[RMDB]
RNA sequence: GGGAACGACUCGAGUAGAGUCGAAAAGAUAUGGACACAUCGAACGGGAGAAGCGUCGGAAACGACCUUCAUCGAUCGUUCGAGUGUGUCCUAAGUCAAAACCUAGAGCAGUUCGCUGCUCUAGGAACUAAUGAUUUAUCUUCGGAUAAAUCAUUAGAAAAGAAACAACAACAACAAC
Reactivity to DMS in 0.01 (KOAc 150mM, MgCl2 10mM, bicine 150mM(pH8.5), 24C), signal-to-noise 8, nucleotides 027 to 126: g010a040u010a300u000g000g000a010c000a010c000a040u000c000g000a010a010c010g000g000g010a050g010a010a010g000c270g020u010c000g020g000a090a080a180c000g010a000c000c000u000u000c010a210u000c170g010a070u000c010g010u000u000c000g010a020g010u000g020u000g010u000c000c000u000a010a070g000u010c040a110a060a100a130c000c000u000a010g000a010g010c000a010g000u000u010c250g010c000u000g000c000u000c000u000a000g010g010a020a070
Reactivity to 2A3 in 0.01 (KOAc 150mM, MgCl2 10mM, bicine 150mM(pH8.5), 24C), signal-to-noise 4, nucleotides 027 to 126: g020a010u060a030u140g000g000a000c000a000c000a020u010c010g010a010a000c020g030g050g000a040g000a010a010g040c110g150u000c000g020g020a050a060a030c010g000a010c000c000u010u010c020a130u190c010g060a080u070c010g000u000u000c000g010a010g000u040g000u000g000u000c000c000u000a050a020g010u000c030a030a020a080a140c000c000u000a000g000a000g000c000a000g000u080u240c290g060c160u000g000c000u000c000u000a000g000g000a000a000
The record gives the reactivity of an RNA of 177 nucleotides to DMS and 2A3. The reactions ran in a buffer of 150 mM KOAc, 10 mM MgCl2 and 150 mM bicine (pH 8.5), at 24 C. The data come from the RNA Mapping Database (RMDB), library TTRDEL.